[RMDB]
RNA sequence: GGGAACGACUCGAGUAGAGUCGAAAAGAUAUGGACGGAUAGGAGCAACAGCUAUGUGUCGGAAACGACAUGAAUAGACAUGCUCCGUCCGUCCUAAGUCAAAACGUGAGGCCUUCGGGCCUCACGAUCCAAUGUUACUCUUCGGAGUAACAUUGGAAAAAGAAACAACAACAACAAC
Reactivity to DMS in 0.01 (KOAc 150mM, MgCl2 10mM, bicine 150mM(pH8.5), 24C), signal-to-noise 4, nucleotides 027 to 126: g000a020u000a100u020g000g000a020c010g000g010a020u000a070g070g000a010g010c000a110a080c180a210g010c000u000a010u000g000u000g020u000c000g010g000a040a020a080c000g010a000c000a000u000g020a090a050u000a010g010a030c060a300u010g010c000u000c000c000g010u000c000c000g010u000c000c000u000a000a040g000u010c010a110a070a090a150c040g020u010g000a000g010g010c000c000u000u020c200g030g020g010c000c000u000c000a000c000g020a040
Reactivity to 2A3 in 0.01 (KOAc 150mM, MgCl2 10mM, bicine 150mM(pH8.5), 24C), signal-to-noise 4, nucleotides 027 to 126: g000a000u030a000u060g000g000a000c010g020g000a030u250a300g130g010a030g000c140a160a180c100a260g000c010u010a010u140g020u000g010u010c010g020g000a030a020a010c010g020a000c020a020u070g100a060a100u030a010g000a010c160a280u300g000c010u000c000c000g000u000c000c000g000u010c000c000u000a010a000g000u000c010a020a000a040a060c020g020u000g000a000g030g010c010c000u080u160c300g150g000g000c000c000u000c000a000c000g010a000
This 177-nucleotide RNA was probed chemically with DMS and 2A3. The 2A3 profile rests on 10,212 reads. Source: RMDB library TTRDES, as collected in RNAgym.